This 177-nucleotide RNA was probed chemically with 2A3 and DMS. For 2A3 the reverse transcriptase was SuperScript II with manganese. Reactivities are given for positions 27 through 126. For DMS, 1,999 sequencing reads were counted. Conditions: 150 mM KOAc, 10 mM MgCl2 and 150 mM bicine (pH 8.5), 24 C.
[RMDB]
RNA sequence: GGGAACGACUCGAGUAGAGUCGAAAAGAUAUGGACACACUCCCCACCGCAAUACUGUCGAUGAAACAGAUGCGUUCGGAAACGAACGCAUCUGUGGAGACAGUCAUUGCGAGGUGUGUCCUAAGUCCAAUGUAGCUUCGUUCGCGAAGCUACAUUGAAAAGAAACAACAACAACAAC
Reactivity to 2A3 in 0.01 (KOAc 150mM, MgCl2 10mM, bicine 150mM(pH8.5), 24C), signal-to-noise 2, nucleotides 027 to 126: g080a100u260a170u300g010g010a010c000a000c000a000c050u300c030c070c000c000a020c030c000g040c000a000a030u010a020c000u000g010u000c030g300a300u050g010a040a000a010c000a010g010a020u010g010c000g000u000u020c030g040g050a100a110a010c000g000a000a000c030g020c010a020u000c000u000g000u000g000g000a000g000a010c000a010g000u030c030a010u010u030g000c010g000a000g000g010u000g000u000g000u010c000c000u010a070a010g050u020c030
Reactivity to DMS in 0.01 (KOAc 150mM, MgCl2 10mM, bicine 150mM(pH8.5), 24C), signal-to-noise 2, nucleotides 027 to 126: g010a160u020a200u020g020g010a000c000a000c000a010c000u010c180c020c010c070a300c130c000g020c000a000a010u000a010c010u000g000u000c020g010a160u020g030a150a160a040c000a000g000a000u000g000c000g010u000u000c000g020g000a070a090a180c030g000a020a010c000g000c000a010u000c000u000g000u000g000g000a040g000a010c000a000g010u000c110a010u000u000g000c000g010a040g010g000u000g020u000g000u000c000c000u010a010a100g010u020c080